[RMDB]
This 177-nucleotide RNA was probed chemically with 2A3 and DMS. 2A3 adducts were read by reverse transcription with SuperScript II with manganese. Reactivities are given for positions 27 through 126. The 2A3 profile rests on 7,397 reads. It was measured as part of the RMDB library TTRDES.

RNA sequence: GGGAACGACUCGAGUAGAGUCGAAAAGAUAUGGAGCCAUAGAGCGAUAAGGAGCCAUCGGAAACGAUGGACCCUCCUUUUGACGCUCUCAUGGCUCCUAAGUCAAAAGGAUAAGUUCGCUUAUCCACACAGAAAAUAUCUUCGGAUAUUUUCUGUGAAAAGAAACAACAACAACAAC
Reactivity to 2A3 in 0.01 (KOAc 150mM, MgCl2 10mM, bicine 150mM(pH8.5), 24C), signal-to-noise 2, nucleotides 027 to 126: g020a000u050a030u110g000g000a000g000c000c000a020u010a010g010a000g010c060g040a050u100a290a010g000g000a000g040c010c000a010u010c010g010g010a060a040a000c020g000a000u010g020g000a030c030c020c010u080c000c000u050u060u080u200g290a170c040g000c000u000c000u000c010a020u000g000g000c010u000c000c000u000a010a000g000u000c000a030a030a020a050g010g010a000u010a000a010g020u030u140c220g100c210u010u000a010u000c010c000a000
Reactivity to DMS in 0.01 (KOAc 150mM, MgCl2 10mM, bicine 150mM(pH8.5), 24C), signal-to-noise 4, nucleotides 027 to 126: g010a040u010a300u010g000g000a030g020c000c020a020u000a030g000a010g000c010g020a150u000a020a010g020g010a040g020c000c000a010u000c000g020g000a090a050a110c010g020a010u000g000g000a080c210c300c040u000c040c010u000u010u010u010g020a230c080g010c010u000c010u000c270a020u000g020g010c020u000c000c000u000a000a050g000u010c020a120a090a110a120g010g010a000u000a010a030g010u000u020c280g020c000u010u000a010u000c020c010a300